[RMDB]
RNA sequence: GGGAACGACUCGAGUAGAGUCGAAAAACUAACGAAUGAGUCCCUGUUCUUUGUACACACCGCCCGUCGUUAUCUAAGAUGGAGGUGCGGGUGAAGAUGUGAGUGUGUAGAGUUGGUGCGAUGCAUGACCAUAAGAUUUGUUCGCAAAUCUUAUGGUAAAAGAAACAACAACAACAAC
Reactivity to 2A3 in 0.01 (KOAc 150mM, MgCl2 10mM, bicine 150mM(pH8.5), 24C), signal-to-noise 3, nucleotides 027 to 126: a000c040u060a060a020c040g090a090a110u170g030a050g100u060c030c020c000u010g090u030u010c030u090u110u110g080u090a020c030a000c010a010c040c000g040c020c010c000g020u100c010g070u100u060a090u000c010u030a090a180g070a210u170g080g020a050g000g060u110g040c000g000g040g020u010g030a030a020g120a100u200g150u110g080a040g020u060g000u000g000u050a050g000a000g100u080u200g040g030u090g040c030g060a020u090g030c060a040u140g080
Reactivity to DMS in 0.01 (KOAc 150mM, MgCl2 10mM, bicine 150mM(pH8.5), 24C), signal-to-noise 7, nucleotides 027 to 126: a080c070u000a060a060c100g010a090a070u000g010a160g010u000c000c030c020u000g010u010u000c040u000u000u000g010u010a060c020a020c020a020c010c010g000c040c010c000g030u000c050g010u010u000a070u010c090u010a100a140g020a100u000g010g010a120g010g020u000g010c010g000g000g010u000g010a050a050g000a130u010g010u010g000a070g020u000g010u000g010u000a040g010a100g010u000u000g010g000u000g000c030g000a050u010g010c090a070u010g010

This 177-nucleotide RNA was probed chemically with 2A3 and DMS. For 2A3 the reverse transcriptase was SuperScript II with manganese. The DMS profile rests on 13,243 reads.